[RMDB]
RNA sequence: GGGAACGACUCGAGUAGAGUCGAAAAAGUGCACUAGGUACGCCUAGUGCACAUUCCAGGACCUACUGCUGAGGAUGUCAAAAAUGCAGUUGGAGUCCUCAACUGGAUAGGCUACGGCCUAUCCAGAAAAAGACUUGGUUGUUCGCAACCAAGUCAAUCAAUAGACACACUUCGGUGUGUCUAUUGAAAAAGAAACAACAACAACAAC
Reactivity to DMS in 0.01 (KOAc 150mM, MgCl2 10mM, bicine 150mM(pH8.5), 24C), signal-to-noise 1, nucleotides 027 to 156: a180g030u000g040c010a000c030u000a000g000g030u010a050c300g060c010c000u000a020g000u000g020c000a020c000a010u000u000c020c000a090g000g000a060c020c000u000a010c060u010g040c030u000g000a130g000g020a230u030g000u010c110a010a090a150a100a180u000g040c030a050g020u000u020g030g000a080g010u000c000c010u010c020a050a170c020u010g010g010a000u000a000g020g030c000u000a110c300g060g010c000c010u000a010u000c000c000a000g000a010a040a050a120a080g000a030c000u000u000g000g010u000u010g000u000u000c230g020c050a030a030c010c000a010a000g000u010c000a010a010
Reactivity to 2A3 in 0.01 (KOAc 150mM, MgCl2 10mM, bicine 150mM(pH8.5), 24C), signal-to-noise 2, nucleotides 027 to 156: a000g020u000g000c000a010c000u000a000g030g000u070a050c240g040c000c000u000a000g010u000g020c000a000c000a000u000u010c000c010a000g000g000a000c000c010u010a010c010u010g070c020u050g020a050g200g080a290u170g210u300c140a090a140a070a010a000u160g000c000a000g000u040u060g100g000a070g040u000c000c000u020c040a080a110c000u030g000g000a000u000a010g010g000c020u060a040c240g060g000c010c000u000a000u000c000c000a000g010a000a000a000a000a000g000a000c000u000u000g010g020u010u000g020u040u110c240g000c050a010a000c000c000a000a000g000u000c010a000a020

An RNA of 207 nucleotides, treated with DMS and 2A3 and read out base by base. The 2A3 profile rests on 1,186 reads. The data come from the RNA Mapping Database (RMDB), library M2RFPK.